Chemical mapping of a 207-nucleotide RNA with 2A3.
The data come from the RNA Mapping Database (RMDB), library M2RFPK.
RNA sequence: GGGAACGACUCGAGUAGAGUCGAAAACACCGGAUCGUGUGGAAGUCCUGCUCGGGGCGGAAGCAUUAAAACCAUUCGAGCUAGUCAAUGCGUGGCGUGUCUCUCCGCAGCGUGUUGGCGAAUGUAACAAGCUGCCUCUCGUUCGCGAGAGGCAGAAGAUGUUAAGUGACUUCGGUCACUUAACAUCAAAAGAAACAACAACAACAAC
Reactivity to 2A3 in 0.01 (KOAc 150mM, MgCl2 10mM, bicine 150mM(pH8.5), 24C), signal-to-noise 2, nucleotides 027 to 156: c080a030c020c010g060g060a100u120c070g020u020g010u030g050g040a060a060g010u000c020c010u030g020c020u030c070g030g000g010g000c020g030g010a000a000g020c030a030u000u230a080a060a050a090c050c040a060u090u060c090g010a020g050c020u030a020g030u020c010a010a010u060g030c000g000u030g080g000c010g050u110g040u030c080u020c020u010c140c000g000c000a010g000c000g000u000g010u020u000g000g020c010g010a020a020u030g020u050a120a110c060a110a000g010c000u000g000c000c000u000c000u010c000g060u120u090c200g000c020g090a000g000a000g010g000c000a000g000a000a000